[RMDB]
RNA sequence: GGGAACGACUCGAGUAGAGUCGAAAAGUAAAAAAACGGUGGAGCGGCUGCAAAAGAGCCGCCCCACCGGGUAAAAUCAGAAAUGAAAGAAGCGGACCCCGCGCAGGUGGCUAACCGGUUACGCGGGAUGAUUGAUUAUUUUCGAAUAAUCAAUCAUAAAAGAAACAACAACAACAAC
Reactivity to 2A3 in 0.01 (KOAc 150mM, MgCl2 10mM, bicine 150mM(pH8.5), 24C), signal-to-noise 1, nucleotides 027 to 126: g020u030a020a160a180a090a030a000a010c000g000g000u000g000g000a010g000c030g010g000c000u090g020c110a060a190a040a090g100a090g050c000c000g020c010c000c000c020a010c000c010g000g010g000u030a000a020a010a070u060c040a000g080a130a100a030u100g000a030a120a200g070a190a000g040c030g000g050a100c040c010c000c000g000c010g010c090a040g010g000u020g030g120c110u070a110a040c000c000g000g060u060u140a070c060g000c000g000g070g000
Reactivity to DMS in 0.01 (KOAc 150mM, MgCl2 10mM, bicine 150mM(pH8.5), 24C), signal-to-noise 2, nucleotides 027 to 126: g010u030a010a020a120a150a100a090a060c010g030g020u010g030g000a080g040c010g040g020c000u000g010c150a080a090a130a300g000a020g010c000c000g020c000c010c000c000a000c000c000g000g010g010u030a020a080a190a070u010c080a040g000a100a100a120u000g020a040a040a060g030a150a160g030c060g010g000a110c140c040c000c010g000c000g000c060a120g000g000u000g000g020c170u050a090a070c010c000g000g020u010u010a020c020g000c000g010g000g000

Structure probing data (2A3 and DMS) for a 177-nucleotide construct. Source: RMDB libraries RFM100 and RFMREP, as collected in RNAgym. The 2A3 profile rests on 560 reads.